[RMDB]
RNA sequence: GGGAACGACUCGAGUAGAGUCGAAAAUUGGCACUCCAAAGGGAAUUCUUCAAAAUAGUCAAAUCUGGUCAUUUUGGGAAGGUACCUGGUUUGAUACUUUCCUAUUUAGUAUUGGUACUACGUUUAAGAAGUACACGUGAUUCGUCACGUGUACUUCAAAAGAAACAACAACAACAAC
Reactivity to DMS in 0.01 (KOAc 150mM, MgCl2 10mM, bicine 150mM(pH8.5), 24C), signal-to-noise 2, nucleotides 027 to 126: u020u000g000g010c060a050c060u010c010c010a060a140a080g010g000g010a170a160u000u000c020u010u010c060a020a040a080a040u000a050g000u000c020a060a060a090u010c100u000g010g000u010c060a110u000u000u010u000g000g020g010a060a040g020g010u000a110c020c000u010g010g010u000u000u030g000a050u010a020c090u000u010u010c000c010u010a050u000u010u000a040g020u010a060u010u010g020g000u010a050c080u000a060c250g000u010u000u010a080a090
Reactivity to 2A3 in 0.01 (KOAc 150mM, MgCl2 10mM, bicine 150mM(pH8.5), 24C), signal-to-noise 1, nucleotides 027 to 126: u090u010g080g000c030a000c030u010c010c000a100a010a060g050g000g000a070a090u060u030c020u100u030c010a020a020a020a080u030a020g010u010c000a000a020a200u080c090u080g000g050u050c020a080u070u040u010u150g040g020g060a000a020g000g030u050a000c000c010u020g070g040u060u040u000g000a060u040a100c010u080u020u030c000c000u050a090u110u150u020a060g030u030a040u150u200g280g000u020a050c030u010a060c020g080u060u070u030a080a030

Record summary
Chemical mapping of a 177-nucleotide RNA with DMS and 2A3. For 2A3 the reverse transcriptase was SuperScript II with manganese. DMS adducts were read by reverse transcription with MarathonRT.